RNA sequence: GGGAACGACUCGAGUAGAGUCGAAAAGUUCGAUCACUCACGAACUCGAGUGUUCGUACUCGUACGAGUUCGUGUGAUCUCGUACUCACACACUCUCACGUGUGAACGUACACGUGUACUCACGUUCGAGUGUGUUCACACGAGAGAACGAUCACACGAUGCCACAGUAAUUCGUUACUGUGGCAUCAAAAGAAACAACAACAACAAC
Reactivity to 2A3 in 0.01 (KOAc 150mM, MgCl2 10mM, bicine 150mM(pH8.5), 24C), signal-to-noise 9, nucleotides 027 to 156: g020u040u040c010g010a020u030c010a010c020u030c000a080c130g280a300a100c170u110c180g010a020g010u020g000u020u040c030g010u040a040c020u040c140g020u010a010c010g010a010g000u020u090c050g000u020g000u000g020a050u020c010u000c000g000u010a010c020u090c050a080c000a010c000a020c100u010c000u000c000a050c050g000u000g000u010g010a020a010c010g010u040a000c030a010c070g030u030g040u130a130c080u100c120a020c020g040u120u130c100g080a070g040u010g000u000g000u000u000c010a010c000a000c000g010a010g000a000g010a040a010c070g050a020u020c000a010c000a000c020
Reactivity to DMS in 0.01 (KOAc 150mM, MgCl2 10mM, bicine 150mM(pH8.5), 24C), signal-to-noise 2, nucleotides 027 to 156: g010u000u000c030g010a060u010c020a150c030u020c030a240c040g000a090a120c080u020c040g030a110g000u000g000u010u000c060g000u000a040c010u000c020g000u000a070c090g000a130g040u000u000c020g000u000g050u000g000a030u000c000u000c060g020u000a060c000u000c040a100c070a080c070a080c050u000c000u000c040a070c040g000u000g020u000g000a040a090c100g000u000a060c020a170c040g030u000g000u000a060c160u000c020a070c070g010u000u000c110g040a050g050u020g010u000g040u000u000c030a080c030a050c050g000a080g020a070g000a050a100c020g010a050u010c030a050c080a060c050
Conditions: 150 mM KOAc, 10 mM MgCl2 and 150 mM bicine (pH 8.5), 24 C. Chemical mapping of a 207-nucleotide RNA with 2A3 and DMS. The DMS profile rests on 4,301 reads. Values are in units of 0.01, from 0 to 300, in steps of 10. For 2A3 the reverse transcriptase was SuperScript II with manganese. The 2A3 profile rests on 11,637 reads. For DMS the reverse transcriptase was MarathonRT. Values cover nucleotides 27 to 156.